An RNA of 177 nucleotides, treated with DMS and 2A3 and read out base by base. It was measured as part of the RMDB library RFMREP. For 2A3, 2,060 sequencing reads were counted. The RNA was probed in 150 mM KOAc, 10 mM MgCl2 and 150 mM bicine (pH 8.5) at 24 C.
RNA sequence: GGGAACGACUCGAGUAGAGUCGAAAAUCCCCUCAGCAGAGCCUAGAGUAAAGGGGCCAGGCCUCCUCCCCAAUGGGAGAGAGAUGUGUUUGAAGAAGGAGCCUCACUCGGGCUGGCCUGGCUUCACCAAUAUGUCUUGGUUCGCCAAGACAUAUUGAAAAGAAACAACAACAACAAC
Reactivity to DMS in 0.01 (KOAc 150mM, MgCl2 10mM, bicine 150mM(pH8.5), 24C), signal-to-noise 3, nucleotides 027 to 126: u010c000c000c000c070u000c030a070g040c060a140g000a090g020c080c020u000a100g020a070g010u010a060a130a180g000g000g010g020c000c010a010g010g010c020c000u000c070c000u010c030c000c020c290a130a140u030g010g000g010a040g010a080g010a030g010a060u000g020u010g010u000u010u010g000a140a120g010a100a160g010g010a100g020c030c020u010c080a090c040u000c030g010g020g000c040u010g010g010c010c000u010g000g000c010u000u000c000a090c180
Reactivity to 2A3 in 0.01 (KOAc 150mM, MgCl2 10mM, bicine 150mM(pH8.5), 24C), signal-to-noise 1, nucleotides 027 to 126: u010c020c000c020c010u050c020a060g000c050a070g030a010g300c000c010u160a080g020a030g040u130a030a130a100g000g000g000g000c000c000a000g000g020c000c000u010c000c000u020c000c010c010c050a090a080u260g000g030g000a020g010a000g010a000g020a070u110g100u020g020u110u200u210g140a150a120g020a070a020g130g130a030g010c010c000u040c040a090c040u030c040g030g000g000c060u020g020g020c000c000u000g000g030c010u000u020c010a010c000